RNA sequence: GGGAACGACUCGAGUAGAGUCGAAAAUUAUGGUUAUGGUUGAACGUCGCGAAAGGGCUUCUAAAAACGUUCCUAAUUGUCCUGAAUGCGGUACUGAACAGGUUCAAUUAGUCCAUUGGCAGACUAGUAAUCUUCGUUAUAAAUGCCGUCAUUGCAACAUGCAGAAGCGAUUCGUCGCUUCUGCAUGAAAAGAAACAACAACAACAAC
Reactivity to 2A3 in 0.01 (KOAc 150mM, MgCl2 10mM, bicine 150mM(pH8.5), 24C), signal-to-noise 2, nucleotides 027 to 156: u070u030a060u120g010g000u080u060a050u150g020g000u010u020g030a080a010c010g000u010c040g010c040g160a090a080a020g080g020g010c010u090u000c060u190a050a150a090a020a000c010g000u020u010c020c000u030a040a020u050u040g000u010c000c010u000g040a040a000u070g000c000g000g000u010a040c060u030g000a050a020c040a030g010g000u030u010c040a130a090u050u000a020g000u010c010c010a140u030u030g040g000c030a000g000a010c000u000a000g030u090a010a020u000c040u140u030c030g010u010u030a130u030a190a120a050u080g000c000c000g090u110c030a020u050u140g010c020a070a020
Reactivity to DMS in 0.01 (KOAc 150mM, MgCl2 10mM, bicine 150mM(pH8.5), 24C), signal-to-noise 2, nucleotides 027 to 156: u010u000a060u030g000g010u000u010a020u010g020g010u000u010g000a040a100c080g010u000c020g040c030g020a080a140a130g000g040g000c000u030u000c080u000a060a040a030a090a110c030g020u000u010c000c030u000a050a200u000u000g100u000c010c000u010g020a090a070u000g010c000g000g010u000a140c040u020g030a070a140c040a120g000g010u000u000c080a030a060u000u000a030g000u000c010c030a230u010u000g080g030c100a110g000a040c020u000a100g000u010a070a020u000c020u010u000c090g010u000u020a170u000a080a060a170u000g000c000c010g000u000c060a130u020u040g010c010a070a140

An RNA of 207 nucleotides, treated with 2A3 and DMS and read out base by base. The data come from the RNA Mapping Database (RMDB), library OK3TST. 2A3 adducts were read by reverse transcription with SuperScript II with manganese. DMS (dimethyl sulfate) methylates the pairing face of unpaired adenines and cytosines.